[RMDB]
Source: RMDB library M2PK50, as collected in RNAgym. This 177-nucleotide RNA was probed chemically with 2A3 and DMS.
RNA sequence: GGGAACGACUCGAGUAGAGUCGAAAAGACCAAUCGUUCGCGAUUGGUCAAAAGGUGGAUGCUACGCUACCCAAGUAGCAAAAGUGCAGCUACAAAGCACAAAAACUUGGUUGUUCGCAACCAAGAACAACAUCAUUCUGUUCGCAGAAUGAUGUUGAAAAGAAACAACAACAACAAC
Reactivity to 2A3 in 0.01 (KOAc 150mM, MgCl2 10mM, bicine 150mM(pH8.5), 24C), signal-to-noise 1, nucleotides 027 to 126: g000a000c000c000a000a000u000c000g030u030u040c280g000c000g120a010u010u010g000g000u000c000a010a010a000a020g060g010u040g040g060a100u050g010c000u010a000c010g000c020u050a050c000c000c000a030a010g020u020a000g000c000a060a000a060a000g000u020g000c020a030g020c050u080a100c110a120a150a030g010c040a000c000a010a100a010a020a020c000u000u010g010g010u010u010g020u040u050c230g000c060a000a000c000c000a000a000g000a010a010
Reactivity to DMS in 0.01 (KOAc 150mM, MgCl2 10mM, bicine 150mM(pH8.5), 24C), signal-to-noise 4, nucleotides 027 to 126: g000a010c010c000a000a000u010c000g020u000u000c240g040c010g010a010u000u000g000g030u010c000a000a010a090a120g000g020u000g010g000a140u000g000c010u010a010c010g000c010u000a130c000c000c010a160a040g020u000a010g010c010a020a060a100a110g020u010g000c030a140g010c170u000a150c200a080a090a080g010c020a040c030a110a080a100a080a130c000u000u000g000g010u010u000g010u000u010c180g020c010a010a000c000c010a000a010g000a070a130

The 2A3 profile rests on 11,861 reads. For 2A3 the reverse transcriptase was SuperScript II with manganese. For DMS, 3,863 sequencing reads were counted. The RNA was probed in 150 mM KOAc, 10 mM MgCl2 and 150 mM bicine (pH 8.5) at 24 C.